Structure probing data (2A3 and DMS) for a 177-nucleotide construct.
RNA sequence: GGGAACGACUCGAGUAGAGUCGAAAACAGAGCCGAGUGGCAAAGGAUGUGCGUCCGCGCAGACAACCAGGAGGUUGGCUUAGAAGCAGCCACCCCUUCAAAGAGUGCGUAACAGCUCACUGGUCGAAUAUCAUACUGUAUUCGUACAGUAUGAUAUAAAAGAAACAACAACAACAAC
Reactivity to 2A3 in 0.01 (KOAc 150mM, MgCl2 10mM, bicine 150mM(pH8.5), 24C), signal-to-noise 9, nucleotides 027 to 126: c040a010g060a010g070c010c020g080a040g040u080g020g010c030a060a040a040g070g010a060u080g080u110g140c090g040u000c030c020g000c010g000c020a010g050a150c030a030a050c050c020a010g010g020a040g040g000u080u070g010g000c010u050u030a070g050a280a030g100c060a000g000c000c000a010c010c020c000c000u020u050c030a070a080a030g080a030g040u050g010c010g020u040a080a050c030a090g010c030u050c040a020c030u020g010g030u050c030g050a050
Reactivity to DMS in 0.01 (KOAc 150mM, MgCl2 10mM, bicine 150mM(pH8.5), 24C), signal-to-noise 9, nucleotides 027 to 126: c090a110g010a160g010c010c020g010a140g020u010g010g010c040a070a100a110g010g000a070u000g020u010g010c090g010u010c070c070g020c050g010c050a060g000a110c090a080a080c110c100a060g000g000a090g010g010u020u010g020g010c000u000u010a090g020a140a120g010c300a050g000c000c010a060c020c040c010c010u000u010c100a050a090a080g000a080g010u010g000c030g010u010a080a090c150a130g000c020u010c020a060c030u000g000g010u000c080g010a100